[RMDB]
RNA sequence: GGGAACGACUCGAGUAGAGUCGAAAACAUGUGGAGUCUUUGACAUACUAUGUAUUGAGUAGUAGAGUGUACGAUGACACAAGCUCGGCGAUAAACACUAUGCUCGACAUAGCAGAGAAGUACCGGAAGUGGUUAGUUCAUUCGUGAACUAACCACUAAAAGAAACAACAACAACAAC
Reactivity to 2A3 in 0.01 (KOAc 150mM, MgCl2 10mM, bicine 150mM(pH8.5), 24C), signal-to-noise 2, nucleotides 027 to 126: c070a090u160g050u080g160g030a070g040u020c040u030u060u050g060a030c040a060u260a020c010u010a000u060g070u050a130u160u230g020a000g000u040a000g040u020a050g060a030g150u020g060u030a070c030g010a010u020g050a010c020a000c040a200a050g050c040u000c000g020g000c040g040a080u110a110a190a000c020a000c020u010a010u030g000c010u050c030g000a020c010a010u010a000g000c050a010g010a010g020a040a020g030u060a070c030c000g050g010a030
Reactivity to DMS in 0.01 (KOAc 150mM, MgCl2 10mM, bicine 150mM(pH8.5), 24C), signal-to-noise 3, nucleotides 027 to 126: c120a090u020g050u010g010g020a210g020u000c030u000u000u000g010a180c160a220u020a130c000u000a010u000g010u000a140u010u010g000a040g010u000a010g030u000a060g020a090g020u000g000u010a070c160g010a070u000g000a100c030a120c200a120a180g000c100u000c030g000g020c080g000a100u030a090a050a040c080a050c040u000a020u000g000c000u000c030g000a030c050a050u010a020g010c030a060g000a200g010a050a030g020u000a100c030c000g010g000a130